The record gives the reactivity of an RNA of 177 nucleotides to 2A3 and DMS.

[RMDB]
RNA sequence: GGGAACGACUCGAGUAGAGUCGAAAAUAACAUUCUCUAUUUCGACUAGGCAAAUUUUGAGAGGCCCGAACCCGCUCCAAUAUUGAGCGUAGGAUGGAUGGAUGACCCGGGUGGGCAGCGCGGAUAAACAUUCAUGAUGUUUCGACAUCAUGAAUGUAAAAGAAACAACAACAACAAC
Reactivity to 2A3 in 0.01 (KOAc 150mM, MgCl2 10mM, bicine 150mM(pH8.5), 24C), signal-to-noise 3, nucleotides 027 to 126: u100a020a010c010a080u090u020c020u000c010u030a100u030u080u060c030g030a010c050u060a010g060g030c030a080a090a160u080u120u130u110g170a200g000a040g010g050c080c080c030g030a050a040c040c030c020g020c020u000c020c020a080a140u090a120u210u170g040a040g010c060g030u050a030g040g030a040u060g030g000a020u090g010g050a040u030g020a030c010c040c010g000g030g040u080g000g030g000c030a030g030c050g000c030g000g020a030u100a060a160
Reactivity to DMS in 0.01 (KOAc 150mM, MgCl2 10mM, bicine 150mM(pH8.5), 24C), signal-to-noise 4, nucleotides 027 to 126: u010a090a150c080a080u000u010c030u000c030u010a080u000u000u010c040g020a120c050u000a060g000g010c040a070a060a090u000u010u000u000g000a240g000a110g010g000c050c030c070g020a060a120c140c060c020g000c000u000c020c210a040a090u010a060u010u000g000a100g000c030g010u010a030g010g000a050u000g010g010a090u020g000g010a060u000g010a090c070c010c020g010g000g010u000g010g000g010c060a050g010c070g000c090g020g000a130u010a060a080

DMS adducts were read by reverse transcription with MarathonRT. For DMS, 3,872 sequencing reads were counted. The RNA was probed in 150 mM KOAc, 10 mM MgCl2 and 150 mM bicine (pH 8.5) at 24 C. The 2A3 profile rests on 3,075 reads.